[RMDB]
RNA sequence: GGGAACGACUCGAGUAGAGUCGAAAAUACAGUAGAAUAUUAGCAAUCGUCGUAUUCUACUGGGAGUAUGUGACGAUUGAGAUACACUACAUACUCAUUAGUCAGUAGUGUAUAUGAACUGACUGAAGAUAGAAUGGUCAUUCGUGGCUAUUCUAUCAAAAGAAACAACAACAACAAC
Reactivity to 2A3 in 0.01 (KOAc 150mM, MgCl2 10mM, bicine 150mM(pH8.5), 24C), signal-to-noise 9, nucleotides 027 to 126: u230a010c000a000g000u000a000g000a010a000u010a010u050u050a050g140c010a010a020u020c010g020u000c000g000u010a000u000u000c000u000a010c000u010g010g080g010a120g080u250a130u300g190u150g020a000c000g000a010u000u030g020a040g020a030u020a010c010a000c010u010a000c000a060u080a020c010u050c060a160u130u240a010g020u010c060a000g000u010a000g010u010g070u010a010u010a020u090g100a060a060c070u070g110a030c010u050g040a080a010
Reactivity to DMS in 0.01 (KOAc 150mM, MgCl2 10mM, bicine 150mM(pH8.5), 24C), signal-to-noise 9, nucleotides 027 to 126: u040a040c010a020g000u000a000g000a010a010u000a010u000u010a100g010c010a030a010u000c030g010u000c020g010u000a000u000u000c000u000a000c020u000g000g000g000a060g010u020a060u030g020u010g010a020c010g010a020u000u000g010a190g010a040u010a020c040a010c020u000a000c000a090u030a040c030u000c250a140u030u050a060g010u000c120a110g010u000a040g010u000g000u000a010u010a070u030g000a100a090c140u010g000a120c030u010g000a130a150
The record gives the reactivity of an RNA of 177 nucleotides to 2A3 and DMS.
Values are in units of 0.01, from 0 to 300, in steps of 10.
For DMS the reverse transcriptase was MarathonRT.
Reactivities are given for positions 27 through 126.